Conditions: 150 mM KOAc, 10 mM MgCl2 and 150 mM bicine (pH 8.5), 24 C. The record gives the reactivity of an RNA of 177 nucleotides to 2A3 and DMS. For DMS, 2,549 sequencing reads were counted.

RNA sequence: GGGAACGACUCGAGUAGAGUCGAAAAGAUAUGGAUCAAGCAACAGCGUUCCAUUCGGAAACGAAUGAGACGACAUGCUUAGUCCUAAGUCAAAAGGGCAAGGAGUUGUUCGCAACUCCUUGCCCAAGUAAGAUUAAGGCUUCGGCCUUAAUCUUACAAAAGAAACAACAACAACAAC
Reactivity to 2A3 in 0.01 (KOAc 150mM, MgCl2 10mM, bicine 150mM(pH8.5), 24C), signal-to-noise 1, nucleotides 027 to 126: g010a000u010a010u050g000g000a000u070c100a040a000g000c000a000a160c060a300g220c030g070u110u070c030c000a000u040u010c030g040g000a060a030a030c020g000a000a020u030g000a080g000a120c030g260a170c030a070u000g010c010u000u000a010g000u010c000c000u010a020a020g010u030c050a020a050a180a220g040g000g000c000a010a000g000g020a030g030u010u040g060u150u120c260g050c100a040a010c000u000c000c000u000u000g010c000c010c010a020a000
Reactivity to DMS in 0.01 (KOAc 150mM, MgCl2 10mM, bicine 150mM(pH8.5), 24C), signal-to-noise 2, nucleotides 027 to 126: g010a020u000a120u010g000g000a020u000c070a010a000g000c000a040a080c280a130g000c010g010u000u010c040c010a000u000u000c000g020g000a030a030a090c000g010a000a000u000g010a040g000a010c000g040a210c030a210u000g010c000u010u000a050g010u000c000c000u000a030a120g000u000c010a090a050a100a120g010g000g020c000a000a010g000g000a030g010u020u000g000u010u020c200g000c000a010a000c010u010c000c000u010u000g000c000c000c000a000a000
DMS adducts were read by reverse transcription with MarathonRT. It was measured as part of the RMDB library TTRDEL.